Structure probing data (DMS and 2A3) for a 177-nucleotide construct. It was measured as part of the RMDB library OK2TRN. 2A3 adducts were read by reverse transcription with SuperScript II with manganese. Reactivities are given for positions 27 through 126. Conditions: 150 mM KOAc, 10 mM MgCl2 and 150 mM bicine (pH 8.5), 24 C. The 2A3 profile rests on 2,068 reads. 2A3 is a SHAPE reagent: it acylates the 2'-hydroxyl of flexible nucleotides of all four kinds.
RNA sequence: GGGAACGACUCGAGUAGAGUCGAAAAGUACUGCAACCUGGCACAUGCUCAAUUAUCAUUCCAUGGUCAUAAAGACAGUGUCAAGUUCUUCCUUGGAGUACCUGGAGCAUCGAAGAACGGAGAAGAAACUGAUGAUGAUCUUCGGAUCAUCAUCAGUAAAAGAAACAACAACAACAAC
Reactivity to DMS in 0.01 (KOAc 150mM, MgCl2 10mM, bicine 150mM(pH8.5), 24C), signal-to-noise 3, nucleotides 027 to 126: g030u000a090c080u000g010c090a090a080c040c030u000g010g030c040a070c050a050u000g010c030u010c070a140a080u000u010a050u020c090a110u000u010c080c080a070u010g020g010u020c070a070u000a050a070a150g000a050c050a060g010u010g000u010c020a060a050g000u000u010c040u000u000c000c020u000u000g000g000a080g010u000a070c050c050u010g000g010a130g030c020a030u000c110g000a030a040g010a040a040c050g010g010a090g010a060a090g010a090a080
Reactivity to 2A3 in 0.01 (KOAc 150mM, MgCl2 10mM, bicine 150mM(pH8.5), 24C), signal-to-noise 2, nucleotides 027 to 126: g000u040a030c030u040g030c030a020a050c000c050u040g000g040c000a030c020a180u080g010c020u010c030a010a100u120u060a060u070c030a020u240u040c060c050a000u020g020g030u030c020a030u120a050a110a010g030a040c040a030g010u000g050u100c020a010a070g010u000u010c020u030u000c020c010u010u030g020g030a050g030u050a060c010c000u030g030g040a040g000c010a020u050c040g060a070a030g020a060a030c080g000g040a110g020a090a060g040a040a150